The record gives the reactivity of an RNA of 207 nucleotides to 2A3.
RNA sequence: GGGAACGACUCGAGUAGAGUCGAAAACACCACCAGGCCUGGACAGUGGAGAGGGUGGCUUUUUACAGGGAGUGGGAGUGGAGGGGAUGCCGUGUCCACAUUGAGUGCAUGUGAGGCCCCUUGCAGUACAGGAUGGGACUGUAUGUGGGAAGAGGGGCAUCCAUACACUAUUCGUAGUGUAUGGAUGAAAAGAAACAACAACAACAAC
Reactivity to 2A3 in 0.01 (KOAc 150mM, MgCl2 10mM, bicine 150mM(pH8.5), 24C), signal-to-noise 1, nucleotides 027 to 156: c060a070c000c010a020c010c060a070g040g210c000c070u010g010g030a010c020a020g040u090g050g000a070g040a080g110g030g020u060g020g000c020u180u150u000u050u150a070c030a020g000g050g000a190g060u060g010g030g040a120g050u200g000g190a130g040g030g000g030a010u090g070c040c030g080u090g090u070c030c000a040c000a070u070u220g020a080g050u020g030c000a070u030g030u080g060a080g010g190c000c000c000c000u040u060g060c000a000g000u010a030c010a060g130g010a180u090g080g000g110a020c000u030g080u020a010u050g120u100g180g030g000a030a080g020a070g020g020g010g000

For 2A3 the reverse transcriptase was SuperScript II with manganese. The RNA was probed in 150 mM KOAc, 10 mM MgCl2 and 150 mM bicine (pH 8.5) at 24 C. The data come from the RNA Mapping Database (RMDB), library OK3TST.